This 177-nucleotide RNA was probed chemically with 2A3 and DMS. For DMS the reverse transcriptase was MarathonRT. For 2A3, 1,776 sequencing reads were counted. Values are in units of 0.01, from 0 to 300, in steps of 10.
[RMDB]
RNA sequence: GGGAACGACUCGAGUAGAGUCGAAAACGACAGACGUUCGCGUCUGUCGAAAUACCGAGGUUGUUGCUCGGUAAAUAACAACUACCCUUGGAAACAAGGGAAAAAGGAGAUGGUUCGCCAUCUCCAACAGUAUGUAGUCCUUCGGGACUACAUACUGAAAAGAAACAACAACAACAAC
Reactivity to 2A3 in 0.01 (KOAc 150mM, MgCl2 10mM, bicine 150mM(pH8.5), 24C), signal-to-noise 1, nucleotides 027 to 126: c000g000a000c000a000g000a000c010g010u060u070c220g020c000g110u020c000u010g010u010c010g010a010a000a000u080a010c010c000g000a010g020g060u130u070g060u130u090g030c020u000c000g000g000u010a010a020a000u030a000a010c040a010a040c000u120a110c000c010c000u000u000g000g070a040a050a030c010a000a010g000g040g030a030a060a000a000a030g000g010a000g000a010u000g010g050u000u070c140g010c080c000a000u020c010u000c000c000a030a000
Reactivity to DMS in 0.01 (KOAc 150mM, MgCl2 10mM, bicine 150mM(pH8.5), 24C), signal-to-noise 2, nucleotides 027 to 126: c000g000a020c000a000g000a010c000g060u010u040c160g030c020g030u010c010u000g020u000c000g000a020a070a080u000a060c000c000g000a020g000g000u010u010g010u000u020g010c030u000c000g010g010u020a000a050a020u010a100a070c110a080a120c150u000a150c000c000c000u000u000g000g000a190a040a240c000a010a010g000g010g000a010a030a060a090a060g020g010a000g010a020u000g010g000u000u020c300g000c000c000a000u000c000u000c000c000a010a060